[RMDB]
RNA sequence: GGGAACGACUCGAGUAGAGUCGAAAAGGGGUGGGCCCCCCCGAUCCGAGGGGCCCGACUGCCAAGUUUGGAGAGCACCUCGGGCCGAAGGGUUGAGUAGCACUCAAAGGGAGGAAUCCACUCGGAGAUAGUUGGAGCUUCGGCUCCAACAAAAGAAACAACAACAACAAC
Reactivity to 2A3 in 0.01 (KOAc 150mM, MgCl2 10mM, bicine 150mM(pH8.5), 24C), signal-to-noise 2, nucleotides 027 to 129: g000g030g020g010u060g000g000g000c010c010c000c020c000c020c000g000a040u020c010c000g010a040g020g060g020g000c000c000c000g000a040c020u050g020c020c020a160a020g100u070u110u160g100g000a110g020a010g010c000a070c040c010u020c000g000g000g000c000c000g060a100a060g000g000g000u000u000g010a000g020u030a050g050c090a100c050u020c000a050a050a020g000g000g000a030g000g040a020a030u010c020c000a060c040u040c010g030g020a070g020a050u150a070
Reactivity to DMS in 0.01 (KOAc 150mM, MgCl2 10mM, bicine 150mM(pH8.5), 24C), signal-to-noise 4, nucleotides 027 to 129: g000g000g000g000u010g000g000g060c000c000c000c000c000c000c000g000a100u050c050c030g000a090g050g080g060g000c000c000c000g040a020c140u040g030c130c070a070a120g000u030u050u040g020g020a180g020a130g050c070a070c000c060u010c050g010g030g010c040c050g010a010a020g000g000g070u040u010g020a020g000u000a060g030c020a300c040u040c050a060a050a100g000g000g000a070g030g010a040a110u030c070c000a060c090u010c010g010g020a050g020a090u110a020